Description:
The record gives the reactivity of an RNA of 177 nucleotides to DMS and 2A3. Reactivities are given for positions 27 through 126. 2A3 adducts were read by reverse transcription with SuperScript II with manganese. The data come from the RNA Mapping Database (RMDB), library OK1LIB. Conditions: 150 mM KOAc, 10 mM MgCl2 and 150 mM bicine (pH 8.5), 24 C. 2A3 is a SHAPE reagent: it acylates the 2'-hydroxyl of flexible nucleotides of all four kinds.
[RMDB]
RNA sequence: GGGAACGACUCGAGUAGAGUCGAAAAUAAUCUGACUGGCUAUGAGGUCAGACCUCAUAAGAACCUCAAAUCAUAGUAGUCUUGGGGUGUUGAGACUUGGGUUAAUACACAAACUCAUAAUUGUGUGGAUAUUAUACUAUUUCGAUAGUGUGGUAUCAAAAGAAACAACAACAACAAC
Reactivity to DMS in 0.01 (KOAc 150mM, MgCl2 10mM, bicine 150mM(pH8.5), 24C), signal-to-noise 9, nucleotides 027 to 126: u050a090a170u020c010u000g000a010c010u000g010g020c030u000a010u000g000a040g000g000u000c030a020g010a120c070c020u010c110a090u040a100a110g010a080a060c020c010u010c050a030a040a150u010c020a020u000a020g010u000a090g010u010c060u010u000g000g000g010g020u000g000u010u000g000a040g000a130c170u000u020g000g000g010u010u010a060a100u030a040c030a020c030a010a020a090c150u020c230a110u040a080a080u010u000g010u000g000u000g000
Reactivity to 2A3 in 0.01 (KOAc 150mM, MgCl2 10mM, bicine 150mM(pH8.5), 24C), signal-to-noise 9, nucleotides 027 to 126: u120a000a060u030c010u000g020a010c000u020g030g010c010u010a010u030g010a010g010g000u010c010a000g030a040c000c010u130c030a130u110a180a070g080a090a050c010c020u070c050a050a060a060u020c010a020u020a030g040u010a030g040u020c000u020u060g040g020g000g010u080g080u140u160g030a030g010a020c000u040u060g040g020g000u050u080a080a030u140a100c040a000c020a040a100a040c060u140c130a070u150a180a140u080u060g030u010g010u040g080